[RMDB]
RNA sequence: GGGAACGACUCGAGUAGAGUCGAAAAGUGCGGAGUGAAAUUCAUAGGAGCCUCGCCAUUUUGGCUGAACGCCGCGGUACUCCGCGUAGUCGCGACGUAAACGUUCUGUGUUUGCGUUCAGGCCUCACGUAUUAGCUCCAUUCGUGGAGCUAAUACGAAAAGAAACAACAACAACAAC
Reactivity to 2A3 in 0.01 (KOAc 150mM, MgCl2 10mM, bicine 150mM(pH8.5), 24C), signal-to-noise 6, nucleotides 027 to 126: g130u090g010c020g010g050a010g010u070g130a080a070a120u190u170c080a080u140a170g100g000a000g010c000c010u040c010g000c010c020a080u140u170u090u210g030g000c040u050g010a050a010c040g000c000c010g000c000g010g000u050a040c010u000c020c000g000c010g000u030a030g030u010c040g000c050g030a030c010g040u010a000a000a040c020g050u150u110c090u170g110u040g030u070u070u040g000c000g000u020u030c030a010g020g030c000c020u030c020a050
Reactivity to DMS in 0.01 (KOAc 150mM, MgCl2 10mM, bicine 150mM(pH8.5), 24C), signal-to-noise 5, nucleotides 027 to 126: g010u020g000c000g020g020a030g010u000g000a070a070a090u040u010c140a110u040a110g000g010a150g010c030c020u010c060g000c010c000a160u020u010u030u030g000g000c000u020g010a050a040c120g000c020c020g010c070g000g000u030a040c010u000c020c020g000c020g010u000a060g010u020c030g000c110g020a050c000g010u010a030a020a030c020g020u010u060c170u030g020u000g010u010u010u010g000c010g000u000u000c100a150g000g010c010c020u000c060a300